[RMDB]
RNA sequence: GGGAACGACUCGAGUAGAGUCGAAAAGUCUUUGGCUAUAGAUGCUUACCCUCUCACAAAGCAUGAAGAUAUAGAAUACCAGAAUGUAUUCUGGGUCUACUUACAGUAUAUAGAAAAACUGUAUAAACUAACGAAUUUAGUUCGCUAAAUUCGUUAGAAAAGAAACAACAACAACAAC
Reactivity to 2A3 in 0.01 (KOAc 150mM, MgCl2 10mM, bicine 150mM(pH8.5), 24C), signal-to-noise 3, nucleotides 027 to 126: g000u000c010u060u040u080g020g000c040u030a020u070a230g080a090u050g000c000u040u060a100c000c030c000u000c000u010c000a090c040a070a140a030g010c020a020u060g030a080a020g000a020u070a010u030a230g060a050a030u090a280c030c030a000g040a070a020u130g080u210a180u020u030c000u020g000g050g000u000c010u020a090c040u070u010a000c000a000g010u000a070u000a020u070a200g060a030a140a010a010a010c000u000g010u010a070u030a130a050a020
Reactivity to DMS in 0.01 (KOAc 150mM, MgCl2 10mM, bicine 150mM(pH8.5), 24C), signal-to-noise 3, nucleotides 027 to 126: g010u000c030u000u000u000g020g010c070u020a300u000a080g010a050u000g000c040u000u010a120c040c020c050u000c080u000c100a150c120a070a060a070g010c050a050u000g000a110a070g010a080u000a140u000a040g020a020a060u000a070c000c140a040g010a030a050u030g010u010a060u000u000c000u000g010g000g010u000c020u000a100c200u000u000a030c000a010g010u000a020u010a300u010a130g010a030a070a080a070a020c000u000g000u010a030u000a050a050a160

This 177-nucleotide RNA was probed chemically with 2A3 and DMS. For DMS the reverse transcriptase was MarathonRT. 2A3 adducts were read by reverse transcription with SuperScript II with manganese. The DMS profile rests on 1,670 reads.